[RMDB]
RNA sequence: GGGAACGACUCGAGUAGAGUCGAAAAGUAACUAUGGUUCUCAACUGGGCCUCACCUGGACCUAGUGAAUAUGCUCCAUUUGGGCCUCAUUUGCACCUGGUGACUCUGGUCCCUACCUGGGCAUCAUCGGGACAUGGUUCCACAGCAUGGCCUGCAGUAGUGUAUUCAAAUUCGUUUGAAUACACUAAAAAGAAACAACAACAACAAC
Reactivity to 2A3 in 0.01 (KOAc 150mM, MgCl2 10mM, bicine 150mM(pH8.5), 24C), signal-to-noise 8, nucleotides 027 to 156: g060u050a050a020c040u030a080u210g040g010u080u020c050u010c060a050a100c050u040g010g010g000c040c030u060c060a100c020c040u050g040g020a090c010c020u030a040g020u010g060a030a030u140a060u130g040c030u040c060c050a130u060u070u130g020g010g000c020c010u110c060a090u050u070u110g050c090a060c040c010u010g010g000u020g020a050c010u010c060u100g020g050u120c040c000c020u070a110c010c040u040g000g020g000c030a060u020c010a010u040c040g010g000g040a030c040a060u100g080g000u160u050c020c010a040c020a030g030c030a030u070g010g010c000c010u030g020c030a030g050
Reactivity to DMS in 0.01 (KOAc 150mM, MgCl2 10mM, bicine 150mM(pH8.5), 24C), signal-to-noise 4, nucleotides 027 to 156: g010u010a030a090c050u000a090u010g020g010u000u000c030u000c060a110a150c040u000g010g010g010c030c010u000c030a100c050c030u000g020g010a010c010c020u000a050g030u000g000a080a120u000a060u000g020c040u000c020c060a180u000u010u000g020g020g010c030c030u010c050a100u010u000u000g010c040a270c020c030u010g020g040u000g000a040c020u010c030u010g020g020u000c020c030c040u000a110c110c050u010g010g010g030c040a090u000c040a070u000c040g000g010g020a050c020a080u010g010g010u000u000c020c040a070c090a090g000c020a190u010g010g010c020c010u010g010c090a110g030
The record gives the reactivity of an RNA of 207 nucleotides to 2A3 and DMS. Source: RMDB library OK3TST, as collected in RNAgym. For 2A3 the reverse transcriptase was SuperScript II with manganese.